An RNA of 177 nucleotides, treated with 2A3 and DMS and read out base by base.

RNA sequence: GGGAACGACUCGAGUAGAGUCGAAAAAGUGAUGCCCAUAUUUAUCUGACUCAAGCCUUCCAGUACACUGGUUAUCUUAAUCAGUGUGAACAUCACUCAAGAACCAAUUCGACAGCUUCAUAGUCCACUAUUACCUCAUAUUCGUAUGAGGUAAUAGAAAAGAAACAACAACAACAAC
Reactivity to 2A3 in 0.01 (KOAc 150mM, MgCl2 10mM, bicine 150mM(pH8.5), 24C), signal-to-noise 9, nucleotides 027 to 126: a000g070u050g030a040u090g020c000c010c030a040u060a110u090u140u040a100u040c040u050g070a060c020u040c120a080a040g020c010c010u050u020c030c000a030g050u050a030c010a010c010u010g000g020u040u030a140u170c120u090u200a020a010u010c000a000g000u000g000u000g020a020a010c010a030u030c010a010c020u040c030a060a040g020a070a050c030c010a040a060u060u040c030g040a030c030a040g020c020u040u030c040a060u070a090g050u030c010c010a040
Reactivity to DMS in 0.01 (KOAc 150mM, MgCl2 10mM, bicine 150mM(pH8.5), 24C), signal-to-noise 9, nucleotides 027 to 126: a080g010u010g010a050u000g010c030c020c020a120u010a080u010u000u010a060u020c060u010g010a080c060u010c070a060a090g010c040c040u000u000c030c040a090g010u000a040c030a010c010u000g010g010u000u000a060u010c230u010u000a010a010u000c000a010g010u000g010u000g000a060a100c080a040u000c040a040c030u000c080a090a080g010a080a100c050c040a050a140u000u000c070g010a070c050a070g010c040u010u000c060a050u000a080g000u010c030c090a180
Background
Values cover nucleotides 27 to 126. Source: RMDB library OK2TRN, as collected in RNAgym. The reactions ran in a buffer of 150 mM KOAc, 10 mM MgCl2 and 150 mM bicine (pH 8.5), at 24 C. 2A3 adducts were read by reverse transcription with SuperScript II with manganese. For DMS, 18,444 sequencing reads were counted. For DMS the reverse transcriptase was MarathonRT.